Chemical mapping of a 207-nucleotide RNA with 2A3. For 2A3, 620 sequencing reads were counted. Reactivities are given for positions 27 through 156. It was measured as part of the RMDB library RSTRND.
RNA sequence: GGGAACGACUCGAGUAGAGUCGAAAAAUAUAUAAGCGCAGAGAACACUCAGCGCGACUACGCCCUCGCUGCCUAAUUUGCAGCGACCUGCGUGUCUGUCAGCCUAGAUUCGUCUCUGGUUUAGUGUCUGGCAUCGAUUAAGAGACUUGCUGGUUUGCCGUAUACUACCCUUCGGGGUAGUAUACGGAAAAGAAACAACAACAACAAC
Reactivity to 2A3 in 0.01 (KOAc 150mM, MgCl2 10mM, bicine 150mM(pH8.5), 24C), signal-to-noise 1, nucleotides 027 to 156: a000u240a020u100a040u140a180a090g010c030g000c000a020g030a010g020a260a080c140a110c160u040c060a030g010c010g020c020g020a020c010u210a020c000g000c030c000c000u010c010g010c000u000g000c000c010u180a210a260u150u200u250g020c020a000g010c000g000a010c020c020u080g000c000g020u010g000u000c030u030g020u000c010a010g000c000c000u000a030g010a010u010u020c020g020u040c020u000c000u000g000g000u000u000u010a000g000u000g080u120c020u010g000g020c010a050u140c150g120a040u120u300a040a000g010a000g010a060c020u050u120g090c070u140g010g100u010u090u100g030